[RMDB]
RNA sequence: GGGAACGACUCGAGUAGAGUCGAAAAUGAUGUGUGCUUCCUGGGCUUCCAGCACCUGCACAGAAAGGGGUGAAAUGAAUGUCAUGAGCAGCCACCACUCUGCAGCACAACUCCACAUCCAGGCAUGCUAUUCUUGUCAGUUCGCUGACAAGAAUAGAAAAGAAACAACAACAACAAC
Reactivity to 2A3 in 0.01 (KOAc 150mM, MgCl2 10mM, bicine 150mM(pH8.5), 24C), signal-to-noise 3, nucleotides 027 to 126: u120g050a050u060g070u020g030u030g100c020u050u060c000c000u020g020g010g030c020u120u040c030c000a030g000c000a020c000c020u050g030c060a030c010a080g190a080a060a050g050g020g000g000u070g050a080a080a070u150g050a130a060u140g090u150c060a070u050g050a020g050c040a010g000c020c000a040c000c000a010c000u010c000u040g000c020a010g000c020a020c010a090a110c030u010c010c020a050c000a030u020c010c000a010g060g000c010a020u110g000
Reactivity to DMS in 0.01 (KOAc 150mM, MgCl2 10mM, bicine 150mM(pH8.5), 24C), signal-to-noise 5, nucleotides 027 to 126: u010g010a100u010g020u010g030u010g020c050u010u000c060c020u000g020g010g000c080u000u000c050c060a080g000c060a090c080c040u000g020c040a060c120a080g010a060a100a070g000g010g000g030u010g000a070a070a120u000g000a060a070u020g000u000c050a050u000g010a100g010c060a090g000c040c040a070c050c030a050c040u010c030u000g020c040a050g020c080a070c100a050a060c080u010c020c010a070c070a080u000c010c040a050g000g000c140a050u010g000